The record gives the reactivity of an RNA of 177 nucleotides to 2A3 and DMS. The data come from the RNA Mapping Database (RMDB), library OK2TRN. Conditions: 150 mM KOAc, 10 mM MgCl2 and 150 mM bicine (pH 8.5), 24 C.
RNA sequence: GGGAACGACUCGAGUAGAGUCGAAAAAGGUAGGGCAGCCACAUGAUCUGCCUUUAUCCUCCCAUUUUAAAUCUUGUCAAUAGGUAAUCCACUGGGAGGGGAGUCAAUUGAUUGAUGGGGGACAUAGCCCUUUCGUAGUUUUCGAACUACGAAAGGGAAAAGAAACAACAACAACAAC
Reactivity to 2A3 in 0.01 (KOAc 150mM, MgCl2 10mM, bicine 150mM(pH8.5), 24C), signal-to-noise 2, nucleotides 027 to 126: a000g000g000u020a010g000g010g010c000a010g040c010c080a120c020a160u120g040a160u020c000u010g010c000c000u000u100u000a030u010c010c000u020c000c000c010a010u090u060u010u140a110a180a040u030c040u080u130g090u090c050a040a120u020a100g000g050u070a020a110u000c010c020a060c110u030g030g040g080a050g000g020g020g020a020g030u030c020a010a090u050u110g040a040u100u050g020a020u070g020g020g000g000g000a000c040a080u150a060g050
Reactivity to DMS in 0.01 (KOAc 150mM, MgCl2 10mM, bicine 150mM(pH8.5), 24C), signal-to-noise 2, nucleotides 027 to 126: a070g010g020u000a040g020g010g000c020a020g000c260c100a150c210a090u000g010a070u000c000u000g020c010c010u000u010u000a060u000c010c040u000c000c010c000a120u000u000u000u000a030a110a110u000c030u000u010g020u010c160a080a060u000a040g000g030u000a030a160u000c050c080a050c100u000g010g000g020a080g020g000g010g010a090g000u000c050a060a100u000u010g030a070u000u000g000a020u010g010g010g010g000g010a110c180a090u000a120g020